[RMDB]
RNA sequence: GGGAACGACUCGAGUAGAGUCGAAAAGUUGCAAAGGGAGGUACCGUUGCAGUUCCAGGGCCUUUUGGAUCAGGAAAGUGUGUUACAGGUGAUACGCCAGUGCUUCUGGCAGAUGGAACUGUAAUGACCCGUACCCAUUAUUCGUAAUGGGUACGGGAAAAGAAACAACAACAACAAC
Reactivity to DMS in 0.01 (KOAc 150mM, MgCl2 10mM, bicine 150mM(pH8.5), 24C), signal-to-noise 2, nucleotides 027 to 126: g010u000u000g000c090a070a140a130g010g000g000a040g000g020u020a060c210c010g000u000u010g000c020a050g000u010u000c000c050a080g000g000g010c040c000u000u000u000u040g010g000a080u010c020a050g000g000a090a060a060g000u050g000u000g000u000u000a060c090a050g080g000u030g000a070u020a060c120g020c000c020a020g000u010g010c240u020u010c020u020g000g000c020a050g000a150u000g000g000a020a040c000u010g000u010a020a000u000g000a170
Reactivity to 2A3 in 0.01 (KOAc 150mM, MgCl2 10mM, bicine 150mM(pH8.5), 24C), signal-to-noise 4, nucleotides 027 to 126: g040u030u000g100c050a020a110a110g050g040g010a040g030g090u120a120c010c040g000u000u010g020c010a000g000u020u010c000c000a030g100g000g000c010c020u080u110u150u240g150g010a090u080c060a070g110g090a130a190a140g040u070g060u040g050u180u140a080c100a040g150g030u070g050a130u070a200c090g010c000c000a030g020u080g130c100u120u160c000u000g010g000c000a000g010a070u040g000g000a000a000c000u010g000u010a010a030u030g000a020
Background:
Chemical mapping of a 177-nucleotide RNA with DMS and 2A3. The data come from the RNA Mapping Database (RMDB), library OK1LIB. Conditions: 150 mM KOAc, 10 mM MgCl2 and 150 mM bicine (pH 8.5), 24 C. For 2A3, 2,049 sequencing reads were counted.